Source: RMDB library M2RFPK, as collected in RNAgym. Chemical mapping of a 207-nucleotide RNA with 2A3. 2A3 adducts were read by reverse transcription with SuperScript II with manganese. The reactions ran in a buffer of 150 mM KOAc, 10 mM MgCl2 and 150 mM bicine (pH 8.5), at 24 C.
[RMDB]
RNA sequence: GGGAACGACUCGAGUAGAGUCGAAAAGCCUCCUCGCUUCCAUAGUAAGGGGACGGGGCAGAUCGCAAGUGCUACAACCGAGCGGUGGUAUCUGUCAAACUAAGCAGCCACUGCACAUCAAUUGACUAAACGAUGCCGAUCUUCGGAUCGGCAUCAAGAAGUAGCAGAGGUUCGCCUCUGCUACUUCAAAAGAAACAACAACAACAAC
Reactivity to 2A3 in 0.01 (KOAc 150mM, MgCl2 10mM, bicine 150mM(pH8.5), 24C), signal-to-noise 1, nucleotides 027 to 156: g000c010c030u090c020c000u000c050g010c050u130u000c050c000a050u030a130g120u190a250a200g090g000g000g000a020c010g000g000g000g090c010a030g000a070u090c000g030c000a000a020g030u000g000c010u150a020c090a130a080c020c070g150a010g040c000g000g010u020g000g000u050a070u040c010u000g000u080c050a120a050a070c180u070a020a020g000c010a010g020c030c000a000c000u030g050c000a000c000a050u200c110a050a250u220u300g070a040c060u160a030a180a000c030g020a000u000g000c000c000g000a000u000c000u030u030c190g100g000a010u000c000g000g060c000a000u000c000a000a000
About this RNA
The 2A3 profile rests on 412 reads.